[RMDB]
RNA sequence: GGGAACGACUCGAGUAGAGUCGAAAACGCACUCGCAGCUCAAUAACCUGCGCUGAGCCCUUCUCCCCCAGCUUGCCUGUGUCCUAGGGAAUUGGAAGGUCAUCCUUCACAGGAUCGUGUGGAAGUCAUUACUCGUGAGUGUUCGCACUCACGAGAACCUAGUUUGGUUGUUCGCAACCAAACUAGGAAAAGAAACAACAACAACAAC
Reactivity to DMS in 0.01 (KOAc 150mM, MgCl2 10mM, bicine 150mM(pH8.5), 24C), signal-to-noise 1, nucleotides 027 to 156: c060g020c020a050c030u000c050g050c050a030g000c010u000c010a140a130u020a150a090c280c000u000g000c000g110c070u010g000a040g010c040c030c030u000u000c110u000c000c000c020c020c060a120g000c000u000u000g020c030c010u000g010u010g000u010c060c030u030a110g070g010g010a030a100u010u000g000g010a080a080g000g020u020c100a180u020c020c020u000u010c000a110c010a080g030g020a060u000c050g020u000g050u000g080g000a120a260g000u000c060a130u000u020a130c000u020c000g030u000g010a010g030u000g050u000u000c300g020c000a000c000u000c000a080c000g010a010g010a030a090
Reactivity to 2A3 in 0.01 (KOAc 150mM, MgCl2 10mM, bicine 150mM(pH8.5), 24C), signal-to-noise 2, nucleotides 027 to 156: c020g020c010a040c050u040c030g020c000a000g020c040u080c160a130a170u140a110a110c010c000u050g000c010g010c080u020g050a050g000c070c020c000u170u090c080u090c100c010c010c000c000a000g020c000u000u080g060c000c000u060g000u000g030u100c030c060u030a050g060g110g020a090a160u100u100g050g040a080a020g020g000u170c020a040u110c040c000u050u090c010a040c000a030g040g010a020u100c030g020u020g020u110g130g000a060a000g040u060c070a080u060u120a080c030u000c000g000u000g000a000g000u000g000u000u050c060g010c040a000c000u000c000a000c020g010a000g000a000a000

Structure probing data (DMS and 2A3) for a 207-nucleotide construct. The RNA was probed in 150 mM KOAc, 10 mM MgCl2 and 150 mM bicine (pH 8.5) at 24 C. DMS adducts were read by reverse transcription with MarathonRT. For 2A3 the reverse transcriptase was SuperScript II with manganese.